[RMDB]
The record gives the reactivity of an RNA of 177 nucleotides to DMS and 2A3. The reactions ran in a buffer of 150 mM KOAc, 10 mM MgCl2 and 150 mM bicine (pH 8.5), at 24 C. For 2A3 the reverse transcriptase was SuperScript II with manganese.

RNA sequence: GGGAACGACUCGAGUAGAGUCGAAAAGACAAGGUGGGUGCACGUGUGGUGAGGCACCUGGUUCACUGUGUAGCCUGUAGGAGUGUGAGGAGUGAGGUCGGGAUGUACCUCGUGUCCUUGGGGCAUCACUUUAACCUAUGUUCGCAUAGGUUAAAGUAAAAGAAACAACAACAACAAC
Reactivity to DMS in 0.01 (KOAc 150mM, MgCl2 10mM, bicine 150mM(pH8.5), 24C), signal-to-noise 9, nucleotides 027 to 126: g010a090c090a090a080g010g020u000g000g010g020u000g010c040a050c080g020u010g020u010g010g020u010g010a110g010g010c030a050c030c020u000g010g000u010u000c050a070c060u000g010u000g010u000a120g010c030c010u000g010u010a090g010g010a070g010u010g010u000g010a070g000g000a230g010u000g010a030g000g010u000c030g010g000g000a130u010g010u010a050c020c010u000c030g010u000g010u000c010c010u000u000g010g000g000g000c130a090u000c120
Reactivity to 2A3 in 0.01 (KOAc 150mM, MgCl2 10mM, bicine 150mM(pH8.5), 24C), signal-to-noise 9, nucleotides 027 to 126: g060a020c050a040a040g070g030u050g030g040g010u060g040c030a010c090g100u130g040u090g070g100u080g040a110g040g010c020a020c000c010u010g010g020u080u070c050a030c070u040g020u040g030u170a020g030c010c010u040g050u080a040g000g130a060g020u150g020u050g040a020g020g000a040g020u070g010a020g020g050u050c030g020g040g040a050u110g030u090a080c000c000u020c020g020u040g080u020c010c000u020u060g020g000g010g020c020a030u080c020